Structure probing data (2A3 and DMS) for a 177-nucleotide construct. Conditions: 150 mM KOAc, 10 mM MgCl2 and 150 mM bicine (pH 8.5), 24 C. The data come from the RNA Mapping Database (RMDB), library OK1LIB.

RNA sequence: GGGAACGACUCGAGUAGAGUCGAAAACAGGGUCCUUAUGUAGGUGGUAACGCAUAUAACUCAUAUGUGGCGUACUUUGUGUUAAAUUACUUAGUGCGUAGAUAUGAGUCGGUGCCAGGGGCGACGAUCAUGGGUUGCUCUUCGGGGCAACUCAUGAAAAAGAAACAACAACAACAAC
Reactivity to 2A3 in 0.01 (KOAc 150mM, MgCl2 10mM, bicine 150mM(pH8.5), 24C), signal-to-noise 9, nucleotides 027 to 126: c040a020g060g020g020u060c010c020u110u070a150u170g150u100a060g040g100u060g030g030u060a100a020c030g010c090a010u140a020u050a170a030c000u000c010a000u010a010u020g190u190g150g000c000g000u000a000c000u010u010u010g020u000g030u060u160a120a250a290u200u060a040c000u000u010a000g000u000g000c000g010u010a030g030a080u000a000u000g000a000g000u010c020g030g010u030g010c020c020a020g000g000g000g010c020g020a040c040g020a030
Reactivity to DMS in 0.01 (KOAc 150mM, MgCl2 10mM, bicine 150mM(pH8.5), 24C), signal-to-noise 9, nucleotides 027 to 126: c110a110g000g010g010u000c030c040u000u020a060u020g020u010a130g010g010u010g010g010u010a050a070c100g010c260a060u020a080u040a140a050c000u000c000a010u000a000u000g020u030g010g000c000g010u000a000c000u000u000u000g000u000g020u010u030a080a080a110u060u050a030c000u000u000a000g020u000g000c000g010u000a060g010a010u010a000u000g000a010g000u010c140g000g010u000g000c020c060a110g000g000g000g000c060g010a070c110g010a120